[RMDB]
RNA sequence: GGGAACGACUCGAGUAGAGUCGAAAACUCUUCUUUUCCUUUCCUCGUCUUCAUCGGUCAGCCUUCUGAGUUCCUCUUCUUCCUCCUUGCUGAGGAUCUUUCCUCCCGCGGAGAGCUGCUUCUUCUUGUGGAGCGGUGUUCGCACCGCUCAAAAGAAACAACAACAACAAC
Reactivity to 2A3 in 0.01 (KOAc 150mM, MgCl2 10mM, bicine 150mM(pH8.5), 24C), signal-to-noise 4, nucleotides 027 to 129: c010u000c000u030u010c000u000u020u010u020c010c000u030u030u030c010c010u040c020g050u020c080u120u070c010a100u020c040g020g000u040c030a030g000c050c000u090u060c030u080g100a040g050u000u090c000c000u010c000u050u060c000u100u030c010c020u000c000c000u030u110g030c060u010g030a040g040g020a030u040c020u070u060u040c000c010u020c000c010c010g000c010g020g000a070g000a010g020c030u050g020c000u050u010c000u080u030c000u050u180g130u190g040
Reactivity to DMS in 0.01 (KOAc 150mM, MgCl2 10mM, bicine 150mM(pH8.5), 24C), signal-to-noise 3, nucleotides 027 to 129: c060u010c050u030u020c030u000u040u070u010c090c060u060u020u000c000c000u040c050g010u020c090u090u020c030a000u020c090g000g000u020c060a160g030c000c000u030u030c050u030g010a010g040u030u020c040c000u000c000u040u000c060u020u030c000c000u020c020c020u020u030g000c130u020g040a000g000g000a080u040c030u030u020u020c000c060u030c030c060c060g000c150g010g040a010g020a100g000c060u030g000c030u020u020c020u000u000c000u070u040g030u060g050
The data come from the RNA Mapping Database (RMDB), library 15KLIB. Chemical mapping of a 170-nucleotide RNA with 2A3 and DMS. Values cover nucleotides 27 to 129. 2A3 is a SHAPE reagent: it acylates the 2'-hydroxyl of flexible nucleotides of all four kinds.